[RMDB]
RNA sequence: GGGAACGACUCGAGUAGAGUCGAAAAACAGGAUGGGAACUGCAUAAUCUGGGCACAGUGCCCCAUGCCUGUGCCCUAGCACUCAGCGAGUUGAGGAAGGAAGACCAGAAGGUACAGGGUCAUUCUCGGCCAUAUUUGCGGUUUGCGGCCAGCCUGAGAGGAUAGGAUAUUUCGAUAUCCUAUCCUCAAAAGAAACAACAACAACAAC
Reactivity to 2A3 in 0.01 (KOAc 150mM, MgCl2 10mM, bicine 150mM(pH8.5), 24C), signal-to-noise 3, nucleotides 027 to 156: a000c040a020g010g020a030u040g050g000g010a020a030c020u060g030c020a030u080a180a070u120c090u140g000g010g010c020a010c010a010g020u100g150c000c010c030c020a060u220g020c000c000u000g000u000g000c000c000c010u010a000g000c010a020c020u050c040a040g020c030g110a060g070u060u030g050a020g000g060a050a040g080g020a050a040g020a030c030c040a020g040a130a040g120g000u100a050c080a100g080g000g030u010c030a090u090u040c040u020c060g060g000c030c020a090u080a100u200u050u110g070c030g000g000u020u060u030g020c030g060g000c010c000a010g000c010c010u010g020a040
Reactivity to DMS in 0.01 (KOAc 150mM, MgCl2 10mM, bicine 150mM(pH8.5), 24C), signal-to-noise 1, nucleotides 027 to 156: a110c070a060g000g010a160u000g060g020g000a110a140c000u000g000c080a140u020a070a060u000c120u010g000g040g030c020a020c000a030g010u000g040c030c030c120c100a090u000g000c030c020u010g040u000g040c000c010c020u000a010g010c020a100c060u000c020a090g010c070g010a100g040u000u010g000a150g050g000a090a070g060g020a090a040g010a050c030c040a120g010a070a120g000g000u010a070c070a160g020g050g020u000c030a110u000u000c000u000c000g060g000c010c010a140u000a060u000u010u000g010c040g020g040u000u000u020g050c070g020g000c020c010a080g000c060c010u000g000a300

An RNA of 207 nucleotides, treated with 2A3 and DMS and read out base by base. The RNA was probed in 150 mM KOAc, 10 mM MgCl2 and 150 mM bicine (pH 8.5) at 24 C. For 2A3 the reverse transcriptase was SuperScript II with manganese. The data come from the RNA Mapping Database (RMDB), library OK3TST. For 2A3, 2,068 sequencing reads were counted.